[RMDB]
RNA sequence: GGGAACGACUCGAGUAGAGUCGAAAAAAGAUCUGAUGGCCUUGUGCCGCAAAGCAAGUAGCGAUGAGUGUCUUGACGAAUCGUACUACGCCACUUGUUAGUGAGCUGGGUAGUAAAGCAUGUCGGAGAUUAAUGCUGCGUUCGCGCAGCAUUAAUCAAAAGAAACAACAACAACAAC
Reactivity to 2A3 in 0.01 (KOAc 150mM, MgCl2 10mM, bicine 150mM(pH8.5), 24C), signal-to-noise 2, nucleotides 027 to 126: a010a000g060a030u010c040u120g030a070u110g110g000c010c030u080u140g110u160g050c030c030g000c040a030a030a010g000c020a030a020g020u050a000g000c030g010a060u050g070a050g020u050g030u020c040u070u140g040a020c020g010a000a050u050c020g000u010a020c000u000a000c010g120c000c000a020c010u090u080g170u210u060a140g010u140g160a020g000c130u030g090g000g020u040a000g020u030a000a090a040g050c060a040u130g080u140c040g070g040a040
Reactivity to DMS in 0.01 (KOAc 150mM, MgCl2 10mM, bicine 150mM(pH8.5), 24C), signal-to-noise 3, nucleotides 027 to 126: a050a060g010a080u010c050u010g020a080u010g020g020c030c020u010u020g040u000g020c050c030g020c130a060a100a150g020c040a040a040g030u010a040g000c010g010a070u000g000a110g000u010g010u000c030u010u000g020a100c100g000a070a070u010c100g010u000a000c030u000a030c040g020c030c030a040c010u000u000g000u000u020a140g030u000g000a050g020c200u010g000g020g010u000a020g000u010a030a090a070g010c130a070u010g010u000c010g020g000a160
The record gives the reactivity of an RNA of 177 nucleotides to 2A3 and DMS. The RNA was probed in 150 mM KOAc, 10 mM MgCl2 and 150 mM bicine (pH 8.5) at 24 C. The 2A3 profile rests on 1,359 reads. 2A3 is a SHAPE reagent: it acylates the 2'-hydroxyl of flexible nucleotides of all four kinds. It was measured as part of the RMDB library OK2TST.